The record gives the reactivity of an RNA of 177 nucleotides to 2A3 and DMS.
For DMS, 907 sequencing reads were counted.
It was measured as part of the RMDB library OK2TST.
DMS (dimethyl sulfate) methylates the pairing face of unpaired adenines and cytosines.

RNA sequence: GGGAACGACUCGAGUAGAGUCGAAAAUUUGGCGAUGCGGGUGAUCAGUGCGGCACUCUUAAUCAACCCCUGAGCAUCAAUCACCACAUCAUAACUGCGCUGCUGUACAACACGUUUAAAAUCACAGCCAUUGUUCCCUGUUCGCAGGGAACAAUGGAAAAGAAACAACAACAACAAC
Reactivity to 2A3 in 0.01 (KOAc 150mM, MgCl2 10mM, bicine 150mM(pH8.5), 24C), signal-to-noise 1, nucleotides 027 to 126: u050u020u140g070g010c060g010a000u050g080c130g040g000g010u020g000a040u010c040a040g030u010g040c000g020g030c020a030c050u120c020u050u200a240a170u090c060a110a240c000c020c020c000u090g040a010g030c030a050u080c030a040a030u050c030a030c000c000a020c010a040u000c040a000u100a160a030c030u050g000c030g000c010u050g060c010u030g000u010a020c000a050a030c000a080c040g000u050u070u210a110a080a000a040u110c070a060c010a020g000
Reactivity to DMS in 0.01 (KOAc 150mM, MgCl2 10mM, bicine 150mM(pH8.5), 24C), signal-to-noise 2, nucleotides 027 to 126: u000u000u000g000g030c060g010a050u000g000c120g000g010g010u000g000a120u030c140a160g000u000g010c050g020g010c010a050c050u000c030u000u000a080a170u010c140a040a180c060c000c010c040u000g000a130g020c010a000u000c130a070a050u000c020a100c030c000a110c080a010u000c060a030u000a110a110c080u010g000c050g020c020u000g020c010u000g020u000a090c080a030a040c050a060c170g000u000u000u000a050a020a080a160u000c090a050c230a170g000